[RMDB]
RNA sequence: GGGAACGACUCGAGUAGAGUCGAAAAGAUAUGGACCUAGCUAGAAGGACGGCACGUGCCAGGUCCUGUGUCGGAAACGACACCUGACCGGUAAUACGUGCCCGUCCUUCUAGCUAGGUCCUAAGUCGAAAUUUAAUCGGUUCGCCGAUUAAAUUUCAAAAGAAACAACAACAACAAC
Reactivity to DMS in 0.01 (KOAc 150mM, MgCl2 10mM, bicine 150mM(pH8.5), 24C), signal-to-noise 1, nucleotides 027 to 126: g030a130u010a300u000g020g010a000c000c000u000a010g000c020u000a020g000a050a000g030g040a100c040g000g000c010a000c010g070u000g000c040c010a110g080g020u000c000c040u000g040u000g030u000c000g010g030a120a120a270c010g030a020c000a000c020c070u010g000a030c000c030g010g040u000a110a200u000a180c000g010u010g010c120c020c010g020u010c000c010u010u000c000u000a000g000c000u000a000g010g010u000c000c010u000a000a090g020u000c080